Notes:
This 177-nucleotide RNA was probed chemically with DMS and 2A3.
RNA sequence: GGGAACGACUCGAGUAGAGUCGAAAAGAUCGCCCAACUCGAGGGCGAACUCGAGCGAACGAACGGGGAAGACGACGGCGCGAGUGUUCACGUCCGGCGACGCGAGCAACUGCGCGGGGCGCGCCUCUCCUAUGCUCCUAUUCGUAGGAGCAUAGGAAAAAGAAACAACAACAACAAC
Reactivity to DMS in 0.01 (KOAc 150mM, MgCl2 10mM, bicine 150mM(pH8.5), 24C), signal-to-noise 5, nucleotides 027 to 126: g010a150u010c030g020c000c000c010a110a130c110u050c170g000a100g000g000g010c030g030a030a030c000u000c030g000a020g000c030g000a080a180c100g010a130a150c090g000g000g000g000a050a030g000a120c040g000a200c080g010g010c020g010c010g000a050g030u000g000u020u020c010a050c010g000u000c020c130g010g030c220g010a050c000g030c070g000a010g010c030a020a050c050u000g010c030g020c010g000g000g000g000c020g000c290g010c010c020u000c070
Reactivity to 2A3 in 0.01 (KOAc 150mM, MgCl2 10mM, bicine 150mM(pH8.5), 24C), signal-to-noise 6, nucleotides 027 to 126: g040a030u080c020g020c000c010c010a070a160c070u080c080g100a120g030g050g080c050g000a060a040c010u010c010g020a010g020c010g030a050a070c030g030a060a010c040g030g000g000g050a060a070g050a020c080g000a000c010g150g010c000g000c020g070a040g030u050g010u020u030c030a030c050g010u010c040c070g170g030c170g030a000c000g000c010g010a020g010c010a040a190c020u070g000c010g000c010g010g000g010g030c010g010c010g020c000c000u020c010

For DMS, 10,250 sequencing reads were counted. 2A3 adducts were read by reverse transcription with SuperScript II with manganese. DMS adducts were read by reverse transcription with MarathonRT. The reactions ran in a buffer of 150 mM KOAc, 10 mM MgCl2 and 150 mM bicine (pH 8.5), at 24 C. Source: RMDB library OK1LIB, as collected in RNAgym.